[RMDB]
RNA sequence: GGGAACGACUCGAGUAGAGUCGAAAACUGCGUGAGUUAAUCUCCUUUUGGAGCUGGACUGAUUAGAAUUUCUAGCGUUUUAAUCGCUCCAUAACCUUAAGCUAGACGCUUUUAAAAGGUGGUUCGCCUUUUAAACUAAGAAACAAGAACUCUUGAACCUUAAGGUGACGUUCGCGUCACCUUAAGGAAAAGAAACAACAACAACAAC
Reactivity to 2A3 in 0.01 (KOAc 150mM, MgCl2 10mM, bicine 150mM(pH8.5), 24C), signal-to-noise 1, nucleotides 027 to 156: c060u110g060c020g070u140g090a170g030u060u240a130a110u070c000u070c040c010u130u200u130u290g060g000a060g000c110u050g010g010a050c020u020g000a000u030u020a000g000a030a020u100u100u080c000u010a000g000c000g030u000u000u000u000a010a000u030c010g000c030u030c000c010a120u110a080a090c010c010u190u100a060a000g000c000u010a020g020a020c020g000c000u020u050u000u010a010a010a000a000g000g020u000g000g000u020u000c010g010c020c000u000u000u000u000a000a000a000c020u040a100a030g080a060a170a040c120a140a210g010a020a020c000u000c040u010u010g050a120a160